About this RNA
The record gives the reactivity of an RNA of 177 nucleotides to 2A3 and DMS. As a SHAPE reagent, 2A3 marks flexible, mostly unpaired nucleotides at the ribose 2'-OH. The RNA was probed in 150 mM KOAc, 10 mM MgCl2 and 150 mM bicine (pH 8.5) at 24 C.
[RMDB]
RNA sequence: GGGAACGACUCGAGUAGAGUCGAAAACGUCUGAGAAGUGAGGAGACCCUCUACCUGGCAACCGCCCCGUCUGAGAAGUGAGGAGCCCCUCCGCCUGGCAGCCACCCCGUCUGGGAAGUGAGGAGCGGUAGCUUGUGAUAUUCGUAUCACAAGCUACAAAAGAAACAACAACAACAAC
Reactivity to 2A3 in 0.01 (KOAc 150mM, MgCl2 10mM, bicine 150mM(pH8.5), 24C), signal-to-noise 3, nucleotides 027 to 126: c020g030u030c050u110g080a020g020a290a090g040u110g080a060g030g030a090g070a130c030c000c000u000c000u020a060c000c020u010g060g000c030a040a100c060c020g030c000c020c020c010g060u010c060u080g100a110g030a210a060g030u080g070a070g000g050a060g010c000c000c030c020u010c010c000g010c000c010u010g040g030c010a010g000c010c010a040c010c000c010c010g070u020c020u050g010g020g050a100a050g080u100g060a070g030g030a020g010c040g030
Reactivity to DMS in 0.01 (KOAc 150mM, MgCl2 10mM, bicine 150mM(pH8.5), 24C), signal-to-noise 4, nucleotides 027 to 126: c110g010u000c040u020g000a120g010a110a090g010u000g000a070g010g010a100g000a120c040c020c020u000c030u000a090c040c020u000g000g000c040a060a100c080c060g010c040c020c010c050g010u000c050u000g000a120g000a070a090g010u000g000a080g010g000a220g010c010c020c010c010u010c020c040g010c020c010u000g000g000c050a050g000c050c080a110c050c030c010c050g000u000c060u000g000g000g000a050a060g020u000g010a090g010g010a080g010c090g010